An RNA of 177 nucleotides, treated with DMS and 2A3 and read out base by base. Values cover nucleotides 27 to 126. The DMS profile rests on 1,248 reads. It was measured as part of the RMDB library OK2TRN. The RNA was probed in 150 mM KOAc, 10 mM MgCl2 and 150 mM bicine (pH 8.5) at 24 C. For 2A3, 1,355 sequencing reads were counted.
RNA sequence: GGGAACGACUCGAGUAGAGUCGAAAAGAUCUGCAGGCCCUACGAUCUAUCUCAGGAUCGGCCCGAUCGGAUCGAUCGGCCUGGCCCUCAUCGGUACGAUCACGUACGUAGAUCACGUGUGGCCGGCCGCUGCAUACGGCUUCGGCCGUAUGCAGCGAAAAGAAACAACAACAACAAC
Reactivity to DMS in 0.01 (KOAc 150mM, MgCl2 10mM, bicine 150mM(pH8.5), 24C), signal-to-noise 2, nucleotides 027 to 126: g000a070u000c070u000g000c050a090g030g000c050c030c130u000a100c030g000a020u010c000u000a100u000c120u010c210a160g020g010a030u000c000g010g000c100c010c020g040a010u010c040g030g000a130u010c100g000a050u020c020g030g000c160c020u000g020g000c020c000c000u010c170a050u010c120g030g000u000a010c010g010a170u010c120a100c060g000u010a040c120g020u000a050g000a010u000c060a070c090g000u000g020u000g040g010c000c000g020g000c000
Reactivity to 2A3 in 0.01 (KOAc 150mM, MgCl2 10mM, bicine 150mM(pH8.5), 24C), signal-to-noise 2, nucleotides 027 to 126: g000a090u060c050u120g030c010a030g000g000c000c000c000u030a030c070g000a000u000c000u010a020u010c130u070c160a040g080g010a000u020c000g020g000c070c020c000g020a040u020c050g050g040a140u150c080g020a000u040c020g030g000c040c010u040g020g040c000c030c010u050c080a250u130c070g030g010u020a020c020g040a170u290c120a020c300g010u080a000c080g040u000a020g000a050u020c040a010c120g130u130g040u080g000g000c000c000g000g040c000